[RMDB]
RNA sequence: GGGAACGACUCGAGUAGAGUCGAAAACCGUAGGGUCUGACCCAAGGACGAAACCAGCGUUGAAAGAUUCUUCGAAAGAGGAAUCUGGAGCUGACUGACGGUACUUGCAGACCCUAAACGGAAAAUCCUCAAGCACUCUUCGGAGUGCUUGAGGAAAGAGUAAAUACUUCUUCGGAAGUAUUUACUCAAAAGAAACAACAACAACAAC
Reactivity to 2A3 in 0.01 (KOAc 150mM, MgCl2 10mM, bicine 150mM(pH8.5), 24C), signal-to-noise 3, nucleotides 027 to 156: c010c000g000u020a010g000g000g010u000c000u010g110a140c040c050c020a010a000g020g000a030c010g010a040a020a030c030c010a010g010c020g230u290u050g020a010a010a010g000a000u000u010c000u000u010c000g050a090a050a040g010a000g000g000a000a000u010c000u010g000g010a010g000c000u000g010a060c030u040g040a020c020g030g110u300a030c000u000u010g000c000a010g010a000c000c000c000u010a030a020a010c020g050g000a050a040a000a150u020c000c010u000c000a000a000g010c020a010c010u030c010u060u200c300g090g000a000g010u000g000c000u000u000g000a000g000g000a000a000a010
Reactivity to DMS in 0.01 (KOAc 150mM, MgCl2 10mM, bicine 150mM(pH8.5), 24C), signal-to-noise 1, nucleotides 027 to 156: c020c010g070u040a030g000g030g090u010c000u000g030a280c190c220c080a050a080g000g000a110c000g000a060a150a140c150c000a010g000c020g000u000u030g000a180a170a080g000a040u000u000c020u000u000c000g000a090a240a300g020a020g000g000a010a000u000c010u000g000g000a150g000c020u000g010a050c030u000g000a270c050g000g000u000a020c000u010u000g030c000a050g000a030c000c000c020u000a000a030a090c000g050g000a120a010a080a120u000c010c000u000c000a060a030g020c000a050c000u010c000u000u000c300g050g000a030g000u000g000c050u020u000g000a050g010g010a000a000a000
Annotation
Structure probing data (2A3 and DMS) for a 207-nucleotide construct. It was measured as part of the RMDB library RNAMAK. For 2A3 the reverse transcriptase was SuperScript II with manganese.